[RMDB]
RNA sequence: GGGAACGACUCGAGUAGAGUCGAAAAUGAGCCUGGAACCAAGCUGGGGUGCUCAGUGGAGAGUCUCAGGAAAGUGACAGUUGAACUCAGUCCCCUGAAAGAUACAGGGAUGGACAGCCACUUCAGGGAUCAGCAGUAGUUUCGACUACUGCUGAUCAAAAGAAACAACAACAACAAC
Reactivity to 2A3 in 0.01 (KOAc 150mM, MgCl2 10mM, bicine 150mM(pH8.5), 24C), signal-to-noise 2, nucleotides 027 to 126: u040g000a000g020c000c050u000g030g050a020a010c010c010a060a000g110c020u020g030g000g000g050u060g050c010u010c040a230g130u230g240g040a040g000a010g030u000c000u000c030a060g050g030a160a060a000g020u010g040a010c010a040g010u110u120g040a060a030c030u010c010a010g080u030c040c020c000c000u020g040a180a110a020g090a020u110a130c070a030g060g010g060a100u110g030g000a020c050a040g000c000c030a030c030u080u050c020a030g000g000
Reactivity to DMS in 0.01 (KOAc 150mM, MgCl2 10mM, bicine 150mM(pH8.5), 24C), signal-to-noise 3, nucleotides 027 to 126: u000g020a050g000c110c020u000g000g000a100a040c030c040a070a200g020c050u000g010g010g000g020u020g010c030u000c030a190g010u000g010g000a110g010a050g000u000c000u040c020a010g000g010a070a200a080g000u000g000a120c020a040g000u000u000g000a140a130c040u000c030a050g010u000c030c000c010c050u000g010a040a060a140g000a210u010a090c070a070g000g010g000a090u000g010g020a100c080a090g000c010c030a080c100u000u000c070a050g040g000